[RMDB]
An RNA of 177 nucleotides, treated with 2A3 and DMS and read out base by base.
The data come from the RNA Mapping Database (RMDB), library M2PK50.
For 2A3, 2,855 sequencing reads were counted.
Conditions: 150 mM KOAc, 10 mM MgCl2 and 150 mM bicine (pH 8.5), 24 C.
RNA sequence: GGGAACGACUCGAGUAGAGUCGAAAACGAUAAGCAUUCGUGCUUAUCGACGGUACGAAAGUACAAAGGAGCAAAAGCAUCGGCUCCUAAUAACGAUGCAAAAGACAACGGGGUUCGCCCCGUUGAAUGGAAGGAUAACAUUCGUGUUAUCCUUCCAAAAAGAAACAACAACAACAAC
Reactivity to 2A3 in 0.01 (KOAc 150mM, MgCl2 10mM, bicine 150mM(pH8.5), 24C), signal-to-noise 2, nucleotides 027 to 126: c000g000a010u000a000a000g000c010a000u030u190c290g090u020g000c010u000u000a000u000c000g000a000c050g080g000u010a000c010g020a120a040a010g010u000a000c000a020a160a060g030g000a010g000c030a070a040a180a090g000c000a010u000c010g010g030c000u010c010c030u020a040a040u140a010a010c000g000a000u010g030c020a060a080a020a020g120a040c010a010a000c000g000g010g010g020u020u070c130g170c000c020c000c000g000u000u010g000a020a020
Reactivity to DMS in 0.01 (KOAc 150mM, MgCl2 10mM, bicine 150mM(pH8.5), 24C), signal-to-noise 4, nucleotides 027 to 126: c020g010a000u010a000a000g020c000a060u000u000c190g010u000g010c020u010u000a000u000c000g000a060c230g000g000u000a010c020g010a160a090a180g010u000a000c000a150a170a170g000g000a020g020c010a080a070a080a090g000c000a010u000c000g020g010c010u000c000c000u000a050a030u010a060a060c020g010a000u000g020c010a080a090a100a090g010a200c010a000a000c000g020g000g000g040u000u000c220g020c000c000c000c000g020u000u000g000a060a090